Description: Chemical mapping of a 207-nucleotide RNA with 2A3.

RNA sequence: GGGAACGACUCGAGUAGAGUCGAAAACAGAAGGUUGCAAAGACUCCCACCAGGAAGGAAGGCACAGGGUAGGAGUGAGCAUGCCAUCCCUAGAGCAGGGCAUGGAUGGGCAGUGGGGCUCAGUGGGAAUGAAUGUGGCCUCUGGAGUGAGCACAGCCCAUAUGAUGAGCUUCGGCUCAUCAUAUGGAAAAGAAACAACAACAACAAC
Reactivity to 2A3 in 0.01 (KOAc 150mM, MgCl2 10mM, bicine 150mM(pH8.5), 24C), signal-to-noise 3, nucleotides 027 to 156: c030a040g120a130a050g050g010u030u020g020c040a070a090a070g090a100c020u000c030c000c000a030c010c020a040g100g050a060a080g080g030a050a060g080g000c070a020c040a100g010g050g050u040a060g050g030a040g010u060g000a020g000c040a030u150g070c000c000a070u070c010c000c020u150a160g020a020g120c100a010g000g050g000c050a020u020g010g050a050u070g000g000g030c040a040g040u080g020g000g010g000c030u030c050a030g010u020g010g000g010a020a020u130g060a080a020u040g020u020g030g000c000c020u010c030u010g000g010a030g050u110g000a020g050c080a020c030a120g030c010

2A3 adducts were read by reverse transcription with SuperScript II with manganese. Values cover nucleotides 27 to 156. Conditions: 150 mM KOAc, 10 mM MgCl2 and 150 mM bicine (pH 8.5), 24 C.